[RMDB]
RNA sequence: GGGAACGACUCGAGUAGAGUCGAAAAGGACGGUAGUGCGGAACUGGACGGUGAUGAGGGUACACUUGCUGGCAUGGUGGCGUUACUGGUGCUUAAUAAAAGCCAGAAAAUAAUUAAUGAGUCAGCCAAGUUGAGUUUACUUCGGUAAACUCAACUUAAAAGAAACAACAACAACAAC
Reactivity to DMS in 0.01 (KOAc 150mM, MgCl2 10mM, bicine 150mM(pH8.5), 24C), signal-to-noise 2, nucleotides 027 to 126: g000g000a060c090g030g020u000a070g040u000g040c080g060g000a140a040c090u000g000g030a040c110g000g030u000g010a060u030g000a090g010g010g010u010a090c090a060c070u000u000g000c050u000g010g010c010a050u020g010g000u010g010g000c040g010u020u000a070c000u020g010g000u000g010c110u000u010a090a100u010a120a080a090a090g000c020c010a070g000a110a030a090a060u000a080a090u000u000a020a080u010g000a010g010u000c030a050g010c080c130